Annotation: Structure probing data (DMS and 2A3) for a 177-nucleotide construct. For DMS the reverse transcriptase was MarathonRT. The DMS profile rests on 711 reads. The RNA was probed in 150 mM KOAc, 10 mM MgCl2 and 150 mM bicine (pH 8.5) at 24 C. For 2A3, 748 sequencing reads were counted. The data come from the RNA Mapping Database (RMDB), library OK1LIB.
RNA sequence: GGGAACGACUCGAGUAGAGUCGAAAAUGUCAAUUAGCUAAGAUGAUAUCGCGCUAUAUGAUUAUUAAUGAAACAGAUAGAAUACUGAUGGCAAUGCGUCCGUAUCAAGUGUAUGCGGUAGAAGCACGGCUCAUAAGCAGUUCGCUGCUUAUGAGCCAAAAGAAACAACAACAACAAC
Reactivity to DMS in 0.01 (KOAc 150mM, MgCl2 10mM, bicine 150mM(pH8.5), 24C), signal-to-noise 1, nucleotides 027 to 126: u020g010u000c020a000a300u080u080a020g000c000u020a240a050g000a130u000g000a200u000a300u000c000g080c300g110c000u000a000u000a300u000g000a000u000u000a000u040u070a070a180u090g000a030a070a050c100a000g000a160u000a030g020a020a000u080a050c000u000g000a180u000g000g050c010a030a110u050g000c300g000u000c000c000g000u000a000u000c050a000a020g030u000g000u000a030u220g000c020g000g000u080a020g000a100a070g000c040a070c300
Reactivity to 2A3 in 0.01 (KOAc 150mM, MgCl2 10mM, bicine 150mM(pH8.5), 24C), signal-to-noise 2, nucleotides 027 to 126: u060g000u000c010a040a110u040u010a030g070c030u130a140a130g000a030u070g040a040u010a030u270c000g000c030g000c090u000a010u030a030u190g040a000u010u030a060u010u030a090a200u250g270a050a000a000c000a040g070a060u120a090g230a170a020u150a050c000u120g090a230u050g080g020c050a020a180u020g040c030g070u070c050c050g050u030a000u110c090a270a160g020u080g000u300a000u080g000c000g000g110u020a010g000a130a000g060c020a060c150